[RMDB]
Chemical mapping of a 177-nucleotide RNA with DMS and 2A3. For DMS, 3,860 sequencing reads were counted. It was measured as part of the RMDB library TTRDES.
RNA sequence: GGGAACGACUCGAGUAGAGUCGAAAAGAUAUGGAUUCCCGUGGACAUGAUCCCCGCUCGGAAACGAGCGGAGCGAUCAACAGCCACAGGGAAUCCUAAGUCAAACACCCAUCCUUCGGGAUGGGUGGGUGUAUUGCAUGUUCGCAUGCAAUACACCAAAAGAAACAACAACAACAAC
Reactivity to DMS in 0.01 (KOAc 150mM, MgCl2 10mM, bicine 150mM(pH8.5), 24C), signal-to-noise 3, nucleotides 027 to 126: g010a020u010a120u000g000g000a020u000u000c000c000c000g030u000g000g010a040c100a250u010g000a010u000c000c010c000c000g000c000u000c000g010g010a040a030a060c010g020a010g020c000g010g020a030g020c260g020a010u000c000a070a060c290a200g000c000c000a000c000a180g030g000g000a010a000u000c000c000u000a000a080g000u010c010a190a150a300c010a010c000c010c000a000u000c000c000u000u010c250g040g020g010a010u010g030g000g020u010g000
Reactivity to 2A3 in 0.01 (KOAc 150mM, MgCl2 10mM, bicine 150mM(pH8.5), 24C), signal-to-noise 4, nucleotides 027 to 126: g010a010u040a010u070g010g000a010u000u000c000c000c010g000u000g010g030a200c270a300u300g000a000u000c010c010c000c000g000c000u000c000g010g020a020a040a020c000g000a010g010c010g010g010a010g000c170g000a010u020c000a070a020c090a050g010c010c030a010c100a100g000g000g020a000a000u000c000c000u000a010a000g010u010c020a070a120a030c000a000c000c020c000a000u000c010c010u050u080c300g200g000g000a010u000g010g000g010u010g000